[RMDB]
RNA sequence: GGGAACGACUCGAGUAGAGUCGAAAAAGCGCACUACGGUGCGCAACUAGGAAUCUCUAGAUCCCCCAGUGUGAUUCUAUGGUCAAUUUUUCUAUAGUCAUGCUGGAGGACCUCGAGAUUUCUAGAAGAAACAGAACCGGUUCGCCGGUUCUGUUUCAAAAGAAACAACAACAACAAC
Reactivity to 2A3 in 0.01 (KOAc 150mM, MgCl2 10mM, bicine 150mM(pH8.5), 24C), signal-to-noise 3, nucleotides 027 to 126: a000g000c010g000c000a010c000u080a050c290g110g000u000g000c010g000c000a000a000c010u000a000g000g000a000a000u000c000u000c000u000a010g000a070u010c020c000c000c000c000a010g000u010g020u010g010a060u220u020c020u060a030u010g040g000u120c150a300a300u070u150u050u100u110c060u020a020u050a000g000u000c010a000u010g010c010u000g000g000a000g000g000a000c000c000u000c000g000a000g010a000u000u010u000c000u000a000g000a010a040